[RMDB]
RNA sequence: GGGAACGACUCGAGUAGAGUCGAAAAAAGGUUCGCUGAAUUAUGAUUGCGUGGCACGCUCGGUCAAGCUCGUGUGGUAUCACACACAUGGCGCCAGGUCACACCAAAAGCUCCUCCGUCACCUCCAAACUGCCGUAAUAUUCGUAUUACGGCAGUUAAAAGAAACAACAACAACAAC
Reactivity to DMS in 0.01 (KOAc 150mM, MgCl2 10mM, bicine 150mM(pH8.5), 24C), signal-to-noise 4, nucleotides 027 to 126: a100a050g010g000u010u000c050g010c030u000g000a070a120u030u020a040u000g000a080u010u040g030c040g010u000g000g020c040a080c070g020c050u000c030g010g000u010c040a050a080g020c030u010c090g030u000g030u010g010g000u030a090u040c190a050c090a030c050a050c030a090u000g010g010c040g000c020c030a090g000g000u000c050a080c060a090c050c050a030a060a080a100g000c030u000c010c030u000c030c030g000u000c070a060c020c020u000c030c050a080
Reactivity to 2A3 in 0.01 (KOAc 150mM, MgCl2 10mM, bicine 150mM(pH8.5), 24C), signal-to-noise 6, nucleotides 027 to 126: a000a000g070g000u040u030c030g000c030u050g030a120a050u150u060a080u200g090a090u060u110g030c040g000u040g030g030c010a020c070g030c010u030c040g040g050u050c070a070a030g020c030u040c080g020u030g000u020g020g040u170a130u300c010a030c000a000c010a000c010a120u080g050g000c020g020c030c000a010g000g040u020c020a010c020a020c050c010a030a060a010a040g030c010u020c000c010u010c000c020g040u030c010a050c040c000u010c010c020a040